[RMDB]
RNA sequence: GGGAACGACUCGAGUAGAGUCGAAAAGUCAGCACAAACCGGAACCUCCCCAACUGCUCGACAUGAGGGGUGUUGAUGUCGGGGGAAACCCUCCCGUGAACCAGCGGGAUAGAGAGAAAGACAAAGAGAACUUGACAGAGUUCGCUCUGUCAAGUUCAAAAGAAACAACAACAACAAC
Reactivity to DMS in 0.01 (KOAc 150mM, MgCl2 10mM, bicine 150mM(pH8.5), 24C), signal-to-noise 2, nucleotides 027 to 126: g000u010c010a030g050c020a170c140a030a130a070c090c060g020g040a120a120c130c040u000c030c030c000c000a140a160c080u000g000c030u000c040g010a060c040a090u000g010a180g010g000g000g000u000g000u010u000g000a120u000g010u020c020g000g040g000g000g010a080a150a100c040c020c000u000c000c000c020g000u030g000a100a140c280c110a140g000c000g000g000g000a020u000a090g000a300g010a140g010a070a040a030g040a030c040a060a030a090g000a190
Reactivity to 2A3 in 0.01 (KOAc 150mM, MgCl2 10mM, bicine 150mM(pH8.5), 24C), signal-to-noise 2, nucleotides 027 to 126: g020u030c000a000g000c030a030c050a030a090a010c010c000g030g020a030a100c000c000u050c000c010c010c010a000a030c020u050g050c000u080c100g080a150c020a040u080g000a060g050g000g020g020u040g030u010u050g060a070u060g030u040c000g020g010g000g000g000a030a020a020c000c010c010u000c000c000c000g050u040g020a030a070c040c010a040g030c020g000g110g030a010u160a020g100a010g020a000g040a060a050a000g080a030c070a010a100a000g020a010